[RMDB]
RNA sequence: GGGAACGACUCGAGUAGAGUCGAAAAGAAGGUUCAAGCAAGCUAGCCGGCAAAAAAGCAAACUUGACCACCAAGGAUAAAAGAGAUCUUAUCCAAGGAUGCAAAAGAUAAUCUCACUUUUGACACCAAAACAGGGAGUAGUUCGCUACUCCCUGAAGCCUGUGAAAUUGUUCGCAAUUUCACAGGCAAAAGAAACAACAACAACAAC
Reactivity to 2A3 in 0.01 (KOAc 150mM, MgCl2 10mM, bicine 150mM(pH8.5), 24C), signal-to-noise 1, nucleotides 027 to 156: g030a040a050g010g010u060u140c020a040a000g000c020a090a000g000c030u030a040g040c040c030g130g020c140a000a090a090a000a000a000g000c020a030a050a000c100u020u030g000a050c000c010a040c030c010a060a050g000g010a000u000a020a010a000a000g160a010g000a030u020c010u020u010a000u040c000c000a000a060g070g010a010u090g020c000a060a000a000a000g030a040u140a110a060u190c000u010c010a060c030u030u010u040u040g070a130c030a040c050c080a080a120a070a030c010a010g000g010g000a000g020u000a020g000u030u010c060g030c050u000a000c010u070c090c000c000u000g000a000a000